An RNA of 177 nucleotides, treated with DMS and 2A3 and read out base by base. The RNA was probed in 150 mM KOAc, 10 mM MgCl2 and 150 mM bicine (pH 8.5) at 24 C. For 2A3, 948 sequencing reads were counted. The DMS profile rests on 2,598 reads.

[RMDB]
RNA sequence: GGGAACGACUCGAGUAGAGUCGAAAAUUUUGGGCAGAAAACAACUGUUACGCGUCUUGCCACUGUAUUGUAAACACUACAACAAAUUUUAAGUUUAAUACACCUACGCGACAAGAUGAAUCGGAAAAUCGGCUAAUAUAUUCGUAUAUUAGCCGAUAAAAGAAACAACAACAACAAC
Reactivity to DMS in 0.01 (KOAc 150mM, MgCl2 10mM, bicine 150mM(pH8.5), 24C), signal-to-noise 3, nucleotides 027 to 126: u000u000u020u000g010g000g010c020a050g010a060a040a110a100c170a080a110c020u000g010u000u010a100c110g010c030g010u000c030u010u000g000c000c010a080c060u000g000u000a020u010u000g020u010a060a050a040c080a070c110u010a050c100a050a070c150a080a060a180u000u010u000u010a040a090g000u000u000u000a050a090u000a050c030a060c110c100u000a050c090g010c030g010a030c040a020a040g000a030u000g020a060a120u010c070g020g030a120a030a070
Reactivity to 2A3 in 0.01 (KOAc 150mM, MgCl2 10mM, bicine 150mM(pH8.5), 24C), signal-to-noise 2, nucleotides 027 to 126: u150u120u050u050g090g010g020c060a030g020a050a080a040a070c050a070a010c040u070g060u090u160a070c050g010c040g000u000c010u020u030g010c000c010a040c020u080g020u020a010u040u030g070u040a000a030a030c050a000c110u150a040c080a160a000c030a040a160a130u120u190u130u240a140a000g010u030u010u060a070a020u020a000c020a000c010c060u060a030c050g000c020g070a010c010a000a000g010a010u080g010a030a180u090c040g000g090a000a070a000